[RMDB]
The record gives the reactivity of an RNA of 207 nucleotides to DMS and 2A3. The data come from the RNA Mapping Database (RMDB), library OK3TST. For DMS the reverse transcriptase was MarathonRT. Reactivities are rounded to 0.1 and cut off at 0 and 3. The reactions ran in a buffer of 150 mM KOAc, 10 mM MgCl2 and 150 mM bicine (pH 8.5), at 24 C.

RNA sequence: GGGAACGACUCGAGUAGAGUCGAAAAUACUCUCCUAUCAUCGCCAGCAUCAAGGGAAAGGGUUACGACGCCCUGGUGACUUUUACAGUAAACAUAUACAAGGAAGUCAUGACCAAGGAGGGACUCUCCAUCACCAAGAUAAGCAGUUAUGAAGGUACCAGAAUAAAGGGUUCGCCCUUUAUUCUGGAAAAGAAACAACAACAACAAC
Reactivity to DMS in 0.01 (KOAc 150mM, MgCl2 10mM, bicine 150mM(pH8.5), 24C), signal-to-noise 1, nucleotides 027 to 156: u030a070c090u000c000u050c000c030u030a120u010c000a020u000c050g020c010c040a060g040c090a180u000c030a140a300g000g000g000a090a120a040g000g000g050u000u000a080c050g030a210c000g000c000c010c000u020g000g070u000g010a060c020u000u000u020u010a150c120a290g040u000a070a090a170c150a070u000a170u000a110c050a160a170g000g030a040a020g010u010c020a150u000g020a080c000c000a100a090g010g010a020g010g000g010a020c130u010c020u010c010c000a050u000c030a190c030c010a080a130g040a040u000a000a100g030c000a050g000u000u030a080u000g030a030a060g040g000u000a160
Reactivity to 2A3 in 0.01 (KOAc 150mM, MgCl2 10mM, bicine 150mM(pH8.5), 24C), signal-to-noise 2, nucleotides 027 to 156: u150a020c020u030c010u020c010c020u130a150u090c000a020u020c010g040c010c010a000g070c010a030u040c040a070a090g050g000g030a050a040a070g050g000g010u050u070a080c090g090a050c080g080c020c000c020u020g030g000u030g000a060c010u020u050u020u120a080c040a040g020u000a010a160a050c060a150u140a020u060a180c030a150a050g050g000a010a000g020u010c020a040u100g080a070c060c060a040a040g010g020a010g000g020g040a060c020u000c000u000c070c010a030u060c000a020c030c030a050a000g010a050u030a070a050g000c000a010g040u050u040a040u080g030a020a040g010g010u020a030